[RMDB]
The data come from the RNA Mapping Database (RMDB), library OK2TST.
Structure probing data (2A3 and DMS) for a 177-nucleotide construct.
The RNA was probed in 150 mM KOAc, 10 mM MgCl2 and 150 mM bicine (pH 8.5) at 24 C.
2A3 adducts were read by reverse transcription with SuperScript II with manganese.

RNA sequence: GGGAACGACUCGAGUAGAGUCGAAAAGUGAACUGCUCGUUGGUGGUGGUGAACUCGUCGAGGAAGACGCCUUCCCUGCCAAAGGCCUUGAUCUCGCGGAGGCCGCCUGCGGUCUCUUCCACCAGGGCUUCAAUAACGCAUUCGUGCGUUAUUGAAGAAAAGAAACAACAACAACAAC
Reactivity to 2A3 in 0.01 (KOAc 150mM, MgCl2 10mM, bicine 150mM(pH8.5), 24C), signal-to-noise 2, nucleotides 027 to 126: g070u070g010a050a010c010u020g010c010u030c040g110u070u090g060g020u030g020g020u020g020g040u080g030a050a040c020u010c070g090u060c000g070a070g050g190a130a070g000a000c040g020c000c000u010u040c020c000c010u040g050c010c000a030a050a040g060g000c000c000u040u040g020a090u070c050u040c140g000c030g010g010a000g000g000c020c010g020c010c080u080g050c040g000g000u030c000u000c000u020u010c000c010a030c030c000a010g030g000g000
Reactivity to DMS in 0.01 (KOAc 150mM, MgCl2 10mM, bicine 150mM(pH8.5), 24C), signal-to-noise 4, nucleotides 027 to 126: g000u000g000a200a060c030u000g010c000u000c060g010u000u000g020g010u010g010g030u010g010g030u000g000a110a080c040u000c040g020u010c020g000a140g010g000a110a180g010a040c120g000c060c060u000u010c030c030c030u000g010c050c070a050a050a080g020g000c010c030u000u000g010a110u010c060u000c150g010c090g000g010a020g010g010c010c010g020c060c140u010g010c030g020g010u000c020u000c010u000u000c030c100a070c060c000a060g010g000g010